[RMDB]
RNA sequence: GGGAACGACUCGAGUAGAGUCGAAAAAAAGGACGGUGGGGAGUGCCCAGCGGCCGACAGGAGUAAUUCCCGCCGAAACAGGGUUUUCACCCUUCCUUUCUUCGGGUGUCCUUCCUCGCGCCCGCAGCCAUGAAGAGAAGUUCGCUUCUCUUCAUGGAAAAGAAACAACAACAACAAC
Reactivity to DMS in 0.01 (KOAc 150mM, MgCl2 10mM, bicine 150mM(pH8.5), 24C), signal-to-noise 2, nucleotides 027 to 126: a070a010a040g020g010a070c090g020g000u010g020g020g010g000a040g030u010g000c000c020c020a100g010c040g000g020c040c030g040a050c110a060g010g000a050g010u000a050a060u000u000c000c000c010g020c050c030g000a050a060a050c220a030g010g010g010u000u000u010u010c170a060c000c010c000u000u000c020c010u000u000u000c020u000u000c010g000g000g010u010g000u000c050c050u010u000c010c010u010c100g010c070g000c020c010c010g010c150a040g010